[RMDB]
The record gives the reactivity of an RNA of 177 nucleotides to DMS. Conditions: 150 mM KOAc, 10 mM MgCl2 and 150 mM bicine (pH 8.5), 24 C. Reactivities are given for positions 27 through 126. Source: RMDB library OK2TRN, as collected in RNAgym. The DMS profile rests on 1,449 reads.
RNA sequence: GGGAACGACUCGAGUAGAGUCGAAAAAAAGGGUGUAAGAGAGGUGCAUGGACGGAGUCUCUGGAUCAGGGCCACCCAGUGGAGGCAUUCCGGAACUGUUGUCAGAGCUGGAGUCAUGGUCCUGGUGAAGGAUAACUCGGUUCGCCGAGUUAUCCUUAAAAGAAACAACAACAACAAC
Reactivity to DMS in 0.01 (KOAc 150mM, MgCl2 10mM, bicine 150mM(pH8.5), 24C), signal-to-noise 2, nucleotides 027 to 126: a000a050a060g020g010g050u010g050u000a040a100g010a090g020a050g000g010u010g010c110a070u000g020g000a090c080g030g010a100g000u000c050u000c030u040g000g020a050u000c050a020g010g030g010c000c000a110c100c020c030a040g040u000g020g020a230g020g020c090a030u000u010c050c080g030g030a100a080c150u000g010u000u000g010u010c030a030g040a280g010c000u000g010g010a090g000u010c150a140u000g030g000u000c000c000u000g000g000u000g000